About this RNA:
Chemical mapping of a 177-nucleotide RNA with DMS. The reactions ran in a buffer of 150 mM KOAc, 10 mM MgCl2 and 150 mM bicine (pH 8.5), at 24 C. In probing experiments dimethyl sulfate is read out at A N1 and C N3, which are open when not base-paired.
[RMDB]
RNA sequence: GGGAACGACUCGAGUAGAGUCGAAAAGUUAAGUGCAUAGAGGAGCGGUUGGAACCGCACCUGGCUGCGUUGCAGACAAAAGUAGUCGAUGCGGUGAGUGCGCUCACGUCUGCUGGGGGUUAUGGAGUAAUCCAUCGACGUUCGCGUCGAUGGAUUAAAAAGAAACAACAACAACAAC
Reactivity to DMS in 0.01 (KOAc 150mM, MgCl2 10mM, bicine 150mM(pH8.5), 24C), signal-to-noise 1, nucleotides 027 to 126: g040u010u000a060a080g020u000g000c120a010u010a140g010a100g000g000a080g000c020g000g000u000u000g000g010a270a070c010c000g010c000a000c040c020u010g070g030c020u000g000c030g000u000u000g010c190a060g010a100c170a070a060a070a150g000u000a020g030u000c010g000a030u000g000c020g000g000u000g000a200g010u010g010c020g000c000u010c040a040c060g000u000c070u000g020c050u000g000g010g020g020g000u000u000a100u020g020g060a120g010